Structure probing data (DMS and 2A3) for a 207-nucleotide construct. Conditions: 150 mM KOAc, 10 mM MgCl2 and 150 mM bicine (pH 8.5), 24 C. The data come from the RNA Mapping Database (RMDB), library OK3TST. DMS adducts were read by reverse transcription with MarathonRT. Reactivities are rounded to 0.1 and cut off at 0 and 3.
RNA sequence: GGGAACGACUCGAGUAGAGUCGAAAAUGCAAUUGAGCCUCAUUUGCGCAAGUGGGGCAUACCUAAAGGCGGCGUUGAAUCCAACCCUAGUGUGGUAGGCGACAACGACAGCGAGAUCUUGAACUUAACGGCGCAUCGUGAGCUUUAUGAAGAAUUAACCUUAUUCAUCCUUCGGGAUGAAUAAGGUAAAAGAAACAACAACAACAAC
Reactivity to DMS in 0.01 (KOAc 150mM, MgCl2 10mM, bicine 150mM(pH8.5), 24C), signal-to-noise 1, nucleotides 027 to 156: u010g040c070a110a120u010u010g000a120g050c040c020u020c010a020u000u010u000g040c130g020c050a090a120g020u000g000g050g020g020c020a020u000a010c070c000u000a090a260a090g000g030c020g000g010c000g060u000u010g010a090a200u000c060c060a050a090c050c010c020u010a080g050u020g070u010g010g020u030a070g010g020c060g000a260c030a050a030c000g000a100c000a070g000c000g000a130g000a090u010c110u000u010g020a050a150c070u000u000a100a050c100g020g020c010g050c000a090u030c100g000u000g000a090g000c020u000u010u000a070u020g000a110a000g000a080a130u000u000a140
Reactivity to 2A3 in 0.01 (KOAc 150mM, MgCl2 10mM, bicine 150mM(pH8.5), 24C), signal-to-noise 3, nucleotides 027 to 156: u100g000c000a020a070u080u150g040a020g040c000c000u000c010a030u010u070u150g010c040g000c070a170a120g000u020g000g060g000g000c010a020u030a030c020c020u100a100a070a070g110g030c000g000g030c020g050u000u020g010a020a010u050c000c010a020a050c020c000c020u090a180g100u020g070u130g270g050u020a090g010g000c020g030a050c000a020a010c010g070a050c020a020g000c030g030a030g020a060u010c010u040u060g040a100a090c010u030u040a030a060c050g060g000c020g020c020a010u030c050g040u020g040a030g040c010u110u090u170a120u150g100a090a130g030a090a030u110u080a100